RNA sequence: GGGAACGACUCGAGUAGAGUCGAAAACACAUUCACACAUUUUCAGCGCUUAGAGAGCAGCCAUUAGUUUUUUAGCAGCUUGCCAAGUUUUGCAGGCGCAGCACAGCCAAGUUCAAGUUGCAGAGGCCAAGAGAGCAUUCACAAGAGGCUUGCGCCAUCAUUACCCUGUUUUCGAACAGGGUAAUGAAAAAGAAACAACAACAACAAC
Reactivity to DMS in 0.01 (KOAc 150mM, MgCl2 10mM, bicine 150mM(pH8.5), 24C), signal-to-noise 2, nucleotides 027 to 156: c060a050c050a140u020u020c030a120c060a080c110a090u000u000u000u020c050a130g020c010g020c030u000u010a070g010a100g040a120g040c010a050g000c010c050a090u000u000a080g020u000u000u000u000u000u000a110g000c030a160g030c000u000u020g060c130c050a110a220g030u010u000u000u010g040c040a110g020g010c000g020c040a070g050c050a100c070a120g040c020c040a020a100g010u020u000c030a050a120g030u000u000g020c000a100g000a120g030g040c020c020a020a090g010a170g020a110g000c060a150u030u010c050a090c000a040a110g020a190g020g000c050u000u000g010c030g010c000c040a240
Reactivity to 2A3 in 0.01 (KOAc 150mM, MgCl2 10mM, bicine 150mM(pH8.5), 24C), signal-to-noise 3, nucleotides 027 to 156: c090a010c020a050u170u170c070a070c020a020c030a140u070u080u150u200c120a070g030c030g000c050u070u100a060g020a020g000a030g200c060a020g000c040c010a050u090u070a060g070u090u020u020u050u020u030a060g020c060a020g000c000u000u020g020c030c030a160a080g030u040u080u080u160g040c060a040g000g020c040g010c040a010g010c030a030c040a030g020c010c020a060a020g000u070u120c030a040a030g000u040u030g030c010a030g040a060g110g000c060c010a050a020g070a020g010a000g050c030a090u130u090c050a030c010a090a070g060a030g080g020c020u030u060g030c020g010c000c000a030

Chemical mapping of a 207-nucleotide RNA with DMS and 2A3. Source: RMDB library OK3TST, as collected in RNAgym. Reactivities are rounded to 0.1 and cut off at 0 and 3.